[RMDB]
RNA sequence: GGGAACGACUCGAGUAGAGUCGAAAACUCAGCACCACUCUGUGCCUUCCUAGGGCCACGAGGACCUGAGCCCCGCGUGCGACGUCCUGGCCCGGAACCUGCGAGGGCGUCGGGGAAUGGCCCAGGCACUACAGCCUAACUUCGGUUAGGCUGUAGUAAAAGAAACAACAACAACAAC
Reactivity to DMS in 0.01 (KOAc 150mM, MgCl2 10mM, bicine 150mM(pH8.5), 24C), signal-to-noise 3, nucleotides 027 to 126: c030u010c030a140g010c050a080c060c060a150c060u010c050u000g010u000g000c020c030u000u020c050c080u010a150g020g010g010c020c010a050c150g000a090g000g000a170c070c010u000g010a180g010c020c010c010c000g000c070g010u020g020c040g000a090c060g010u000c020c010u000g000g010c020c120c060g010g010a070a060c100c050u000g000c040g000a080g020g010g010c020g020u000c010g010g000g010g010a090a060u010g000g000c020c000c010a060g000g000c300
Reactivity to 2A3 in 0.01 (KOAc 150mM, MgCl2 10mM, bicine 150mM(pH8.5), 24C), signal-to-noise 2, nucleotides 027 to 126: c020u030c030a020g000c070a050c020c020a090c040u110c050u030g060u090g030c010c030u110u170c030c020u110a200g000g030g000c020c040a060c090g080a070g050g020a010c010c020u030g000a020g020c010c010c010c000g040c030g040u100g090c090g010a040c010g050u050c010c010u040g070g020c000c060c000g000g030a030a040c020c030u020g000c010g060a210g020g000g020c000g120u070c010g000g000g010g050a040a110u140g000g000c000c010c010a030g050g000c030
The data come from the RNA Mapping Database (RMDB), library OK2TRN. The record gives the reactivity of an RNA of 177 nucleotides to DMS and 2A3. High 2A3 reactivity points to a flexible backbone, as in loops and unpaired stretches. Reactivities are rounded to 0.1 and cut off at 0 and 3. The RNA was probed in 150 mM KOAc, 10 mM MgCl2 and 150 mM bicine (pH 8.5) at 24 C. For 2A3, 2,457 sequencing reads were counted. The DMS profile rests on 4,180 reads.